Background: This 177-nucleotide RNA was probed chemically with 2A3. Conditions: 150 mM KOAc, 10 mM MgCl2 and 150 mM bicine (pH 8.5), 24 C. Source: RMDB library OK1LIB, as collected in RNAgym.
RNA sequence: GGGAACGACUCGAGUAGAGUCGAAAAGCACUUAAUCAAUGUCGGGGGUGUUCCUCCCAAUAGUAAAUGGAAUGAUUCAUCAGUCUACCAGUCCUUCUCUGACCUGAUUAUGUCCAUAAUUAAGAUACCAUCAGGUGCACUUCGGUGCACCUGAUGGAAAAGAAACAACAACAACAAC
Reactivity to 2A3 in 0.01 (KOAc 150mM, MgCl2 10mM, bicine 150mM(pH8.5), 24C), signal-to-noise 2, nucleotides 027 to 126: g120c000a000c060u060u000a040a080u070c010a000a090u200g070u090c040g030g000g000g020g000u040g000u150u040c070c000u130c010c010c060a030a290u180a000g260u220a080a080a080u090g080g000a060a110u080g000a090u100u050c130a040u040c010a050g060u040c000u130a130c060c070a000g080u020c020c020u070u010c000u080c010u070g100a040c000c010u020g000a010u060u060a020u160g080u030c010c000a030u000a190a030u290u100a080a050g040a130u150a120